[RMDB]
The record gives the reactivity of an RNA of 207 nucleotides to 2A3 and DMS.
RNA sequence: GGGAACGACUCGAGUAGAGUCGAAAACAGAUCGAUAAUUCGUUAUCGAUCUGAACGGUGCUAAGAUUAAUCAGGAUGUUUUUGUACUCGAAAGAAGCUACAAAGAUAAGGCUUCAUGCCGAAAUCAUUUUCAGGUUAGACGUUCGCGUCUAACCUGUGGUGGAUAUAGUUUCGACUAUAUCCACCAAAAAGAAACAACAACAACAAC
Reactivity to 2A3 in 0.01 (KOAc 150mM, MgCl2 10mM, bicine 150mM(pH8.5), 24C), signal-to-noise 5, nucleotides 027 to 156: c010a000g000a000u000c000g010a000u010a010a000u080u110c180g050u060u000a000u000c010g000a000u020c000u000g000a040a010c040g060g050u080g060c070u090a090a060g020a160u210u120a090a070u160c050a050g110g030a070u100g080u010u020u010u020u060g010u040a010c000u010c040g040a060a120a080g050a060a000g010c040u040a040c030a020a080a000g070a060u110a080a110g020g000c010u120u080c140a020u220g020c000c010g060a110a150a040u100c060a070u130u170u130u130c020a000g000g000u010u000a000g000a000c000g020u020u050c230g030c000g110u000c000u000a000a000c010c000u000g000
Reactivity to DMS in 0.01 (KOAc 150mM, MgCl2 10mM, bicine 150mM(pH8.5), 24C), signal-to-noise 3, nucleotides 027 to 156: c010a020g010a010u000c000g020a010u000a000a070u000u020c300g030u000u010a000u000c010g000a000u000c000u020g010a040a070c110g010g010u000g020c030u000a080a130g010a080u000u000a060a090u000c070a140g010g030a140u000g010u000u000u000u000u000g010u000a010c000u000c020g000a170a130a260g000a040a040g020c040u010a040c030a020a020a020g000a040u010a050a180g000g010c010u000u000c160a130u010g020c010c000g010a030a070a090u020c020a110u000u000u000u000c010a020g020g000u010u000a010g020a020c010g030u000u010c300g020c020g020u000c000u000a000a000c000c000u000g010
About this RNA
For DMS the reverse transcriptase was MarathonRT. The reactions ran in a buffer of 150 mM KOAc, 10 mM MgCl2 and 150 mM bicine (pH 8.5), at 24 C. 2A3 adducts were read by reverse transcription with SuperScript II with manganese.